[RMDB]
RNA sequence: GGGAACGACUCGAGUAGAGUCGAAAACAAGGCUAAGAUGCCUAGGGGGUGUGAGAGCAUGGCCCCCACCACUGGGACUGAGACACUGCCCAGACACCUGCGGGUGGCUGCAGUCGAGAAUCUUCCGGAACAUUUAUUUCUUCGGAAAUAAAUGUUCAAAAGAAACAACAACAACAAC
Reactivity to 2A3 in 0.01 (KOAc 150mM, MgCl2 10mM, bicine 150mM(pH8.5), 24C), signal-to-noise 3, nucleotides 027 to 126: c020a030a030g010g000c010u150a200a120g080a230u250g030c010c010u050a050g020g010g010g020g000u070g020u040g070a290g020a030g160c070a080u100g100g040c000c010c090c020c010a000c010c010a040c020u080g030g030g050a030c030u050g060a020g030a080c030a020c060u030g000c030c000c000a000g020a000c000a010c010c000u040g010c200g080g020g000u010g020g000c020u030g000c010a020g000u060c050g000a000g050a120a090u020c010u040u020c040c020g020
Reactivity to DMS in 0.01 (KOAc 150mM, MgCl2 10mM, bicine 150mM(pH8.5), 24C), signal-to-noise 3, nucleotides 027 to 126: c130a190a070g020g020c020u000a130a170g010a090u010g010c000c020u000a090g030g010g000g040g020u000g040u010g010a160g000a090g030c040a090u000g010g010c030c010c010c020c020a070c040c050a130c110u020g010g000g000a080c080u000g020a210g010a070c160a060c050u000g000c060c060c080a060g000a080c040a020c030c010u000g020c150g040g000g030u000g020g020c020u000g000c060a030g020u000c060g000a080g000a090a120u000c070u010u000c060c040g030